[RMDB]
RNA sequence: GGGAACGACUCGAGUAGAGUCGAAAAGUAACUGCUGUAUCAAAGACUCAUAUGCUGUUUCCUCAUAUAAAGAAUAAUACUUGGCCUACACCUAAGCAAAUUGAAGACUUUGGAGAUAAGUGGCAUACGCACGAGGACAGUUCGCUGUCCUCGUGCGAAAAGAAACAACAACAACAAC
Reactivity to 2A3 in 0.01 (KOAc 150mM, MgCl2 10mM, bicine 150mM(pH8.5), 24C), signal-to-noise 1, nucleotides 027 to 126: g000u040a000a120c110u160g000c000u040g000u050a090u300c070a180a000a050g000a080c110u000c040a000u080a040u100g040c110u000g040u000u000u050c000c000u010c000a050u050a090u180a190a300a050g050a030a030u180a120a020u070a070c040u120u230g000g000c000c000u000a010c000a040c080c000u000a010a010g010c070a000a280a190u160u090g030a100a010g070a110c050u000u070u000g030g010a000g010a000u050a180a150g180u000g050g090c000a080u160a080